[RMDB]
RNA sequence: GGGAACGACUCGAGUAGAGUCGAAAACUCCGCCGUGGCGCUUGUGCGGAGCGACUUUGCGUCGACGGAGGACUACGCGGUGGCGUUUGAUUCGACGGUGAGCCUGGUCGGCGGGUCGAUGCUGCUAAGCUCCAUUAAUCUUCGGAUUAAUGGAGCUAAAAGAAACAACAACAACAAC
Reactivity to 2A3 in 0.01 (KOAc 150mM, MgCl2 10mM, bicine 150mM(pH8.5), 24C), signal-to-noise 3, nucleotides 027 to 126: c010u000c000c000g020c000c010g080u040g040g000c030g020c050u100u120g050u110g090c040g060g020a040g000c030g000a030c030u100u080u160g020c020g060u020c010g020a010c030g040g040a030g020g020a040c050u160a060c150g080c090g220g010u030g040g000c040g010u000u080u260g040a070u080u050c020g020a010c030g050g010u070g020a010g030c010c060u040g070g020u020c010g010g000c010g000g020g000u010c000g010a010u050g000c020u000g000c010u050a060
Reactivity to DMS in 0.01 (KOAc 150mM, MgCl2 10mM, bicine 150mM(pH8.5), 24C), signal-to-noise 2, nucleotides 027 to 126: c050u000c000c020g020c040c020g020u010g000g020c040g010c060u010u010g020u010g030c030g000g010a070g010c050g000a040c020u000u000u010g020c020g010u000c000g010a030c040g010g010a080g000g000a120c090u000a080c100g010c070g010g020u000g000g010c040g000u000u000u000g000a090u010u000c030g000a040c030g010g010u010g010a090g020c030c030u000g000g020u000c020g010g000c010g010g000g010u000c010g000a050u000g010c030u000g020c050u000a100